[RMDB]
RNA sequence: GGGAACGACUCGAGUAGAGUCGAAAAUGUCACACAGUAGCGAGGGAUGGAAUUAAUUGCAUCUACACCAAGCUCAAGGCUUGGAUUUCGACUAGUGUCGAGUCGUUCCCACUCGCUACGCCCACAAGAGAUAUGGGGUAUUCGUACCCCAUAUCUCAAAAGAAACAACAACAACAAC
Reactivity to DMS in 0.01 (KOAc 150mM, MgCl2 10mM, bicine 150mM(pH8.5), 24C), signal-to-noise 1, nucleotides 027 to 126: u000g000u000c220a090c220a170c080a100g030u000a000g000c010g030a010g000g010g000a050u000g000g010a060a080u000u000a120a050u010u010g000c040a000u000c000u000a120c160a150c010c030a010a000g000c020u000c190a250a080g000g000c000u000u000g000g000a250u000u000u010c010g000a000c000u000a010g010u010g000u000c010g000a010g020u000c000g010u000u000c000c000c000a010c000u000c000g030c000u000a010c000g000c040c010c020a070c220a070a040